This 207-nucleotide RNA was probed chemically with 2A3 and DMS. 2A3 adducts were read by reverse transcription with SuperScript II with manganese.
[RMDB]
RNA sequence: GGGAACGACUCGAGUAGAGUCGAAAAGACUAAGUUCGCUUAGUCAAAAAACCGUAGGCGUGAACUACGAGUGAAGUGGGACAUCGAUCUUCGAAAGAGGGGAGUCCCAUGGAGGCUCGCACGCCUAAACGGAAAAAUGACUUGUUCGCAAGUCAAAUCGAUAAAUGAACUUCGGUUCAUUUAUCGAAAAAGAAACAACAACAACAAC
Reactivity to 2A3 in 0.01 (KOAc 150mM, MgCl2 10mM, bicine 150mM(pH8.5), 24C), signal-to-noise 3, nucleotides 027 to 156: g000a000c000u000a010a000g020u080u080c080g030c100u010u000a000g000u020c000a060a060a090a060a000a000c000c000g020u010a010g010g000c020g020u020g020a110a060c100u150a080c300g010a010g010u150g020a040a000g010u010g000g010g000a000c010a170u160c120g140a160u030c030u050u020c060g070a130a120a070g030a020g000g000g000g000a020g020u000c010c020c000a000u010g000g000a030g230g150c000u000c010g000c000a000c000g000c000c000u010a000a000a000c000g010g090a050a090a030a000a060u110g000a000c000u010u000g050u100u170c290g030c160a010a000g010u000c000a020a000a100
Reactivity to DMS in 0.01 (KOAc 150mM, MgCl2 10mM, bicine 150mM(pH8.5), 24C), signal-to-noise 2, nucleotides 027 to 156: g010a040c020u000a020a030g000u000u000c300g040c020u010u000a010g000u010c010a000a050a040a080a050a050c040c000g040u000a060g060g000c020g000u000g030a130a200c080u010a110c040g000a060g010u000g000a300a300g000u010g000g000g000a060c020a160u010c110g000a130u000c000u010u000c030g010a110a170a290g000a070g000g010g000g010a090g010u000c010c010c010a020u000g000g000a300g010g000c010u000c020g000c010a030c000g010c000c010u020a000a000a020c010g000g010a020a100a030a110a070u000g000a020c010u000u000g030u000u000c300g050c020a030a020g020u000c020a000a040a140